[RMDB]
The record gives the reactivity of an RNA of 177 nucleotides to 2A3 and DMS.
High 2A3 reactivity points to a flexible backbone, as in loops and unpaired stretches.
RNA sequence: GGGAACGACUCGAGUAGAGUCGAAAAACACACACACUUGGGAUCAGCUGUUAGGACCCAGAUCAACAAACUGAUGGGGUUGUUGACAUAGAGCUUACAACAGUUGAUCUAUGUAAGUGUGUGAGAAGAUAGUUAUCACUUUCGAGUGGUAGCUAUCAAAAGAAACAACAACAACAAC
Reactivity to 2A3 in 0.01 (KOAc 150mM, MgCl2 10mM, bicine 150mM(pH8.5), 24C), signal-to-noise 9, nucleotides 027 to 126: a000c060a000c000a000c000a000c000a000c010u010u020g090g000g000a000u000c000a000g000c000u010g020u020u050a100g030g040a070c010c000c020a020g020a300u000c000a000a010c010a040a070a050c030u140g080a300u270g190g090g040g030u010u000g000u000u000g000a000c010a010u160a040g100a020g040c020u070u110a050c030a040a000c000a010g000u000u000g000a000u010c000u010a020u060g130u060a010a020g000u000g000u000g000u000g000a020g010a010a010
Reactivity to DMS in 0.01 (KOAc 150mM, MgCl2 10mM, bicine 150mM(pH8.5), 24C), signal-to-noise 8, nucleotides 027 to 126: a090c070a250c000a000c000a000c010a010c000u000u000g010g000g000a000u000c000a000g000c000u000g000u000u000a100g010g000a090c300c030c040a130g010a140u000c020a020a030c010a010a030a030c030u010g000a140u050g010g000g020g020u000u000g010u000u000g000a030c050a160u030a100g010a110g000c050u000u070a150c100a010a030c010a010g000u000u000g000a010u000c000u000a030u030g020u030a010a010g020u000g000u000g000u000g000a060g010a110a090